[RMDB]
RNA sequence: GGGAACGACUCGAGUAGAGUCGAAAAGGCUGUCCUGGGGCGACGCCUCCUGGGGCGGCCUGCCGAAGGGGCAGGCCACGCCACCGCCCAAGCCGGUGUUUGCCAGGCUGGAGGGGGAUUUUGUCACCUAAGGGUGUACUUUCGAGUACACCCUUAGAAAAGAAACAACAACAACAAC
Reactivity to DMS in 0.01 (KOAc 150mM, MgCl2 10mM, bicine 150mM(pH8.5), 24C), signal-to-noise 2, nucleotides 027 to 126: g010g010c030u010g020u000c010c020u000g000g000g000g020c140g000a090c060g010c010c020u000c030c050u000g000g000g000g010c010g030g020c020c020u000g060c050c030g010a140a120g030g000g020g040c000a080g000g010c040c070a070c090g000c030c010a080c090c040g000c060c020c040a110a070g030c050c010g010g010u010g000u010u000u020g000c020c000a090g040g000c020u010g000g010a230g020g010g010g020g000a130u010u000u000u010g000u000c100a140c150
This 177-nucleotide RNA was probed chemically with DMS. The reactions ran in a buffer of 150 mM KOAc, 10 mM MgCl2 and 150 mM bicine (pH 8.5), at 24 C. Source: RMDB library OK2TRN, as collected in RNAgym. Reactivities are given for positions 27 through 126.